RNA sequence: GGGAACGACUCGAGUAGAGUCGAAAAGUGGUGUUCGCACCACAAAAAAGCGUACUACUACAACAGAGAUAGUCACUCCCCACCGAUCUCCCAAAUAGGAGAUCGAGGUGAUAUCGACGAAGUUGUAGUAUCGCAAAAAGCAUGCUUCGGCAUGCAACAAUCAAGGAAACUUCGGUUUCCUUGAUUGAAAAGAAACAACAACAACAAC
Reactivity to 2A3 in 0.01 (KOAc 150mM, MgCl2 10mM, bicine 150mM(pH8.5), 24C), signal-to-noise 6, nucleotides 027 to 156: g010u010g000g000u020g020u060u090c190g110c060a050c030c010a020c050a030a140a020a000a010a010g030c030g010u040a050c030u000a000c000u010a000c000a030a000c010a020g040a010g010a070u040a060g300u050c000a010c030u090c030c060c010c010a020c020c010g010a000u000c000u050c010c020c010a180a300a160u300a180g000g000a010g000a000u000c000g000a010g000g000u000g010a010u000a010u020c090g070a140c050g060a120a020g000u000u000g000u000a000g000u000a010u050c010g000c010a020a100a070a000a020g000c000a000u010g000c000u070u100c210g090g000c010a000u000g000c000a000a020
Reactivity to DMS in 0.01 (KOAc 150mM, MgCl2 10mM, bicine 150mM(pH8.5), 24C), signal-to-noise 3, nucleotides 027 to 156: g020u000g030g030u000g030u000u010c160g040c030a050c010c000a030c010a000a030a090a080a070a130g000c010g040u000a080c090u000a040c010u020a030c000a030a230c010a140g020a300g010a070u000a030g010u000c020a110c060u020c180c070c040c040a300c190c000g010a030u000c000u010c000c000c010a060a170a220u000a070g020g000a010g000a000u000c010g010a070g000g010u000g020a090u000a020u000c020g010a300c120g010a040a280g000u000u000g020u000a020g010u000a020u020c020g000c010a020a050a050a140a090g000c000a000u000g020c020u000u000c300g030g020c010a000u000g000c000a030a060
Annotation: The record gives the reactivity of an RNA of 207 nucleotides to 2A3 and DMS. The data come from the RNA Mapping Database (RMDB), library RNAMAK. The reactions ran in a buffer of 150 mM KOAc, 10 mM MgCl2 and 150 mM bicine (pH 8.5), at 24 C.